[RMDB]
RNA sequence: GGGAACGACUCGAGUAGAGUCGAAAAGAAUGUUUUUGGAGCCGUCUCCUAUUUUACCUCGUCCUUACGGCUUUAUACAUAUUUCGAUAUGUAUGCUGGACGACAACGAGGCCAGCUUACAAUUAGAGGGUAGGCUUUACUUCGGUGAAGCCUACCCAAAAGAAACAACAACAACAAC
Reactivity to DMS in 0.01 (KOAc 150mM, MgCl2 10mM, bicine 150mM(pH8.5), 24C), signal-to-noise 2, nucleotides 027 to 126: g000a090a060u000g000u020u020u000u030u000g010g000a050g000c000c170g000u000c010u010c030c080u030a040u010u010u010u020a160c100c000u000c010g000u000c110c050u010u010a090c080g000g000c010u000u020u030a120u000a000c000a010u010a020u000u010u030c100g000a050u020a040u000g000u000a010u020g030c000u030g020g010a040c140g000a060c120a100a060c210g000a090g020g000c040c160a070g000c110u000u020a070c120a020a130u030u020a060g000a300
Reactivity to 2A3 in 0.01 (KOAc 150mM, MgCl2 10mM, bicine 150mM(pH8.5), 24C), signal-to-noise 3, nucleotides 027 to 126: g070a040a080u110g060u000u010u000u010u090g020g000a010g000c020c020g030u040c030u000c020c020u020a130u070u130u130u200a100c000c000u010c010g040u030c000c000u070u130a090c060g020g000c010u010u130u050a020u000a020c030a010u020a010u030u110u040c100g040a000u000a010u090g000u000a000u070g000c020u030g000g000a010c010g020a050c030a130a020c090g030a040g050g000c010c000a000g000c000u040u040a110c010a050a140u030u080a100g070a070
Structure probing data (DMS and 2A3) for a 177-nucleotide construct. DMS adducts were read by reverse transcription with MarathonRT. 2A3 is a SHAPE reagent: it acylates the 2'-hydroxyl of flexible nucleotides of all four kinds. The data come from the RNA Mapping Database (RMDB), library OK1LIB. 2A3 adducts were read by reverse transcription with SuperScript II with manganese.